The record gives the reactivity of an RNA of 207 nucleotides to 2A3.
RNA sequence: GGGAACGACUCGAGUAGAGUCGAAAAACGGUCAUAUACGUAUGACCGAAUGAGCAUAACAGGGCCACCCCAAGGCGUUCACAUUGUGGCCCCUGUCAGAUUCUGGUAAAUCUGCGAGUUCUGCUAAAUUAGGUAACUCUCUUCGGAGAGUUACCAACCCCAUUACCUGGUUCGCCAGGUAAUGGGGAAAAGAAACAACAACAACAAC
Reactivity to 2A3 in 0.01 (KOAc 150mM, MgCl2 10mM, bicine 150mM(pH8.5), 24C), signal-to-noise 1, nucleotides 027 to 156: a000c020g010g020u000c000a000u020a020u000a010c180g170u040a020u010g000a000c000c010g000a020a130u050g030a010g040c000a020u030a160a010c000a080g010g000g000c000c000a020c030c020c030c000a020a100g100g000c020g030u130u110c060a100c080a260u110u130g000u000g000g000c010c010c000c000u020g100u110c000a000g000a040u040u070c040u200g010g060u040a050a030a000u010c000u020g060c050g020a070g020u010u130c030u010g000c040u060a000a240a000u110u110a200g000g000u000a000a000c000u000c000u010c000u090u020c110g020g000a000g000a000g010u000u000a000c010c000a000a000
For 2A3 the reverse transcriptase was SuperScript II with manganese.